Annotation: Chemical mapping of a 177-nucleotide RNA with DMS and 2A3. The reactions ran in a buffer of 150 mM KOAc, 10 mM MgCl2 and 150 mM bicine (pH 8.5), at 24 C. Values cover nucleotides 27 to 126. For DMS the reverse transcriptase was MarathonRT.
[RMDB]
RNA sequence: GGGAACGACUCGAGUAGAGUCGAAAAGGCCGAGACGGGCAGCCGGAGCUUGUGGUACUGUCCCUCCGGCAGGUGGAGUGGGACACAGUUAGAGAACAUUAGUCCUCUGGUCCCUAUCUCCACCCGCGCGGUAAAUCACGUUCGCGUGAUUUACCGCAAAAGAAACAACAACAACAAC
Reactivity to DMS in 0.01 (KOAc 150mM, MgCl2 10mM, bicine 150mM(pH8.5), 24C), signal-to-noise 2, nucleotides 027 to 126: g000g000c000c000g000a090g040a100c120g000g000g010c010a070g010c090c030g000g000a110g000c300u010u010g000u120g020g000u000a110c090u000g000u040c010c090c020u000c010c000g000g020c000a000g000g010u000g000g000a020g040u010g000g000g020a020c000a130c200a170g030u060u010a040g020a020g000a000a040c030a270u010u000a140g060u070c010c000u000c000u010g020g010u000c000c000c020u090a110u040c000u000c000c000a010c000c000c110g000c200
Reactivity to 2A3 in 0.01 (KOAc 150mM, MgCl2 10mM, bicine 150mM(pH8.5), 24C), signal-to-noise 3, nucleotides 027 to 126: g060g000c030c010g020a020g030a040c050g000g010g020c030a000g020c020c000g010g060a080g070c080u300u270g060u180g090g050u080a070c000u050g070u060c000c010c000u000c010c000g040g000c000a000g030g030u000g000g000a000g010u060g030g000g000a010c060a000c010a300g030u220u240a020g010a010g010a200a010c040a160u050u160a160g040u010c010c010u010c000u000g000g010u010c000c000c000u010a090u030c000u040c000c000a000c020c000c010g010c020